Conditions: 150 mM KOAc, 10 mM MgCl2 and 150 mM bicine (pH 8.5), 24 C. The record gives the reactivity of an RNA of 177 nucleotides to 2A3 and DMS. For DMS, 1,803 sequencing reads were counted.
RNA sequence: GGGAACGACUCGAGUAGAGUCGAAAAUUAAAAUGAUCGCAGCUGAAAUGGCGGACGCUAUGGUCUCCCUGACGGGAGGGACUCCAGUCCAAAGAGUCCACUAUCCCACCAUAAGUUUGCCAAAAAAUACAUGCAUAGUGUUCGCACUAUGCAUGUAAAAAGAAACAACAACAACAAC
Reactivity to 2A3 in 0.01 (KOAc 150mM, MgCl2 10mM, bicine 150mM(pH8.5), 24C), signal-to-noise 1, nucleotides 027 to 126: u080u040a040a050a030a130u120g090a060u100c060g010c090a050g000c070u100g050a070a130a160u110g020g010c000g020g000a010c020g040c170u020a000u010g020g010u000c010u000c010c000c000u050g140a030c110g000g000g000a030g000g000g000a000c000u010c010c030a080g160u070c030c010a060a050a040g010a000g010u010c000c020a030c030u080a150u030c020c000c000a000c000c000a000u010a020a000g000u020u010u020g010c010c070a000a090a030a000a000a030
Reactivity to DMS in 0.01 (KOAc 150mM, MgCl2 10mM, bicine 150mM(pH8.5), 24C), signal-to-noise 3, nucleotides 027 to 126: u010u010a060a050a070a130u010g000a040u010c060g020c060a050g000c090u010g010a090a080a060u010g010g010c000g000g010a010c000g000c190u000a010u000g000g000u010c010u000c010c000c000u000g040a130c300g000g000g010a020g010g000g020a010c000u000c000c050a150g040u020c100c150a020a110a110g000a020g010u000c000c020a130c260u000a090u000c030c010c020a060c030c020a010u010a020a080g010u010u000u010g020c020c030a000a000a060a060a060a080
For DMS the reverse transcriptase was MarathonRT.